[RMDB]
RNA sequence: GGGAACGACUCGAGUAGAGUCGAAAACGCUGGGUCUAGUAAGCGCUUAAGUGGGAGCUGAAGCGCGCACGGCGAAGAACACUUACAGCGUAUCUAGACCUGUGCUGAAGCGCGCACGGCAACCGAAAGGUGCGAAGUACUUCUUUCGAGAAGUAAAAGUAGCUAUUAAGUUCGCUUAAUAGCUACUAAAAGAAACAACAACAACAAC
Reactivity to DMS in 0.01 (KOAc 150mM, MgCl2 10mM, bicine 150mM(pH8.5), 24C), signal-to-noise 3, nucleotides 027 to 156: c060g010c030u000g000g030g030u000c000u000a040g020u000a100a140g020c010g000c010u000u000a010a020g040u000g000g020g010a160g000c000u020g000a070a060g020c000g030c030g000c020a300c070g010g000c010g000a120a180g000a120a210c020a020c030u010u000a020c200a030g000c000g030u000a120u000c000u010a030g010a040c010c010u010g000u000g030c000u000g010a120a020g020c030g030c000g000c000a240c010g020g010c020a120a170c020c030g020a090a150a210g010g040u010g010c010g010a090a180g000u000a030c010u000u000c010u000u000u010c190g000a060g010a030a030g020u010a020a100a130
Reactivity to 2A3 in 0.01 (KOAc 150mM, MgCl2 10mM, bicine 150mM(pH8.5), 24C), signal-to-noise 6, nucleotides 027 to 156: c030g020c010u050g000g030g010u000c000u000a000g020u110a300a240g080c000g000c000u010u000a000a000g010u000g000g040g020a030g000c010u020g040a230a050g020c010g000c000g000c000a010c010g000g000c010g060a170a010g010a020a010c020a000c010u010u010a030c170a110g000c020g010u030a070u070c010u000a000g020a000c000c000u000g000u010g000c010u040g020a120a020g000c000g000c000g000c000a010c010g020g000c040a070a040c010c010g070a100a040a020g010g000u030g000c020g030a070a020g060u030a010c000u020u030c000u050u100u150c280g080a040g000a010a000g010u070a010a030a060
Chemical mapping of a 207-nucleotide RNA with DMS and 2A3. Source: RMDB library RNAMAK, as collected in RNAgym. Conditions: 150 mM KOAc, 10 mM MgCl2 and 150 mM bicine (pH 8.5), 24 C. The 2A3 profile rests on 10,524 reads. For DMS the reverse transcriptase was MarathonRT.